[RMDB]
The record gives the reactivity of an RNA of 207 nucleotides to 2A3.
As a SHAPE reagent, 2A3 marks flexible, mostly unpaired nucleotides at the ribose 2'-OH.
The data come from the RNA Mapping Database (RMDB), library OK3TST.
RNA sequence: GGGAACGACUCGAGUAGAGUCGAAAAAAACGAGAGUUUAGUACCUAAACUUAAUCCUAUUUCAGUAGUACAGGUUAUCUUUCUGCCACAUCUUCUAAUUUUUUUAGGUACUAUCCUGAGUCAUGAAGUUGUUGGCAUUACAAUUACCUCAGAAUUAGGGAUAGUAAUCGUUCGCGAUUACUAUCCCAAAAGAAACAACAACAACAAC
Reactivity to 2A3 in 0.01 (KOAc 150mM, MgCl2 10mM, bicine 150mM(pH8.5), 24C), signal-to-noise 1, nucleotides 027 to 156: a000a020a040c120g000a070g000a010g060u000u060u000a020g000u060a010c000c000u030a030a000a030c050u060u090a070a060u140c000c030u040a140u080u140u040c100a050g080u120a040g090u120a160c010a050g050g000u010u010a050u020c000u000u220u010c040u010g030c000c000a000c030a080u020c010u010u000c000u020a110a300u010u050u140u030u000u020u080a020g040g010u040a110c040u050a040u080c020c020u030g020a010g010u030c100a110u100g000a010a000g020u050u050g030u050u050g000g000c000a000u060u020a000c020a040a080u060u120a040c000c020u130c040a020g130a050a070u300u170a130